[RMDB]
Structure probing data (DMS and 2A3) for a 177-nucleotide construct.
Values cover nucleotides 27 to 126.
DMS adducts were read by reverse transcription with MarathonRT.
The reactions ran in a buffer of 150 mM KOAc, 10 mM MgCl2 and 150 mM bicine (pH 8.5), at 24 C.
RNA sequence: GGGAACGACUCGAGUAGAGUCGAAAAGAAAGAGUGGGUACUGGCCUCGGUGCUGGUGGAGCAGUGAGCACGCCAUACAUUAUAUCUGUGACACCUGCCACCCAGCCCAAGGCCCCUAGGCCCACAAAUCAUUUGGCUAUUUCGAUAGCCAAAUGAUAAAAGAAACAACAACAACAAC
Reactivity to DMS in 0.01 (KOAc 150mM, MgCl2 10mM, bicine 150mM(pH8.5), 24C), signal-to-noise 4, nucleotides 027 to 126: g020a070a090a070g020a160g010u010g000g000g010u000a020c030u000g000g020c010c000u000c040g030g020u040g010c010u000g020g020u000g000g030a290g000c010a020g010u010g010a160g000c020a020c050g040c270c220a080u040a100c250a110u040u010a120u030a080u010c200u050g020u000g010a040c040a110c130c030u000g010c040c040a270c300c000c010a000g000c000c010c020a030a000g010g000c000c010c020c060u040a030g010g000c000c000c040a020c030a020a100
Reactivity to 2A3 in 0.01 (KOAc 150mM, MgCl2 10mM, bicine 150mM(pH8.5), 24C), signal-to-noise 8, nucleotides 027 to 126: g180a000a130a010g220a010g010u010g000g010g000u020a030c010u010g000g000c010c010u020c030g000g040u220g000c010u010g010g040u060g020g040a180g010c010a000g000u050g080a130g060c000a010c010g070c060c040a070u180a140c080a040u170u300a140u150a070u200c140u210g020u010g020a010c020a020c020c030u020g020c020c000a030c020c010c000a000g000c000c000c000a000a000g000g000c000c000c000c010u020a020g010g010c000c000c000a000c000a000a010